[RMDB]
RNA sequence: GGGAACGACUCGAGUAGAGUCGAAAACGCGGAUACUUCGGUAUCCGCGAAAGAAGCGAAGGCGUACCGAAAUAAAACGCUAAUAAAUCGCAAAACGCCUAAAAAGCCUAGACUUCGGUCUAGGCAAUCCAGUAUACUUGUUCGCAAGUAUACUGGAAAAAGAAACAACAACAACAAC
Reactivity to DMS in 0.01 (KOAc 150mM, MgCl2 10mM, bicine 150mM(pH8.5), 24C), signal-to-noise 4, nucleotides 027 to 126: c010g020c030g000g030a020u000a020c000u010u020c210g010g020u000a000u000c010c010g000c000g010a010a070a140g020a210a140g010c010g010a050a140g000g000c010g010u000a100c200c100g000a070a090a100u010a050a070a090a060c040g000c020u010a050a080u000a060a090a130u000c010g000c030a070a070a070a080c120g000c000c000u040a020a050a080a090a130g000c010c000u000a010g000a020c000u000u010c200g020g000u000c000u010a000g000g000c000a010a000
Reactivity to 2A3 in 0.01 (KOAc 150mM, MgCl2 10mM, bicine 150mM(pH8.5), 24C), signal-to-noise 3, nucleotides 027 to 126: c030g020c000g000g000a020u020a010c000u030u040c160g030g010u000a000u010c000c000g000c000g000a000a000a010g010a100a000g010c010g020a070a010g030g000c020g010u030a060c070c060g080a090a050a010u140a010a140a010a000c010g000c030u000a020a010u050a070a120a010u020c000g010c020a050a090a000a060c040g030c010c000u080a100a090a050a040a010g010c010c000u000a000g000a010c000u020u030c300g040g000u000c000u000a000g000g000c000a000a000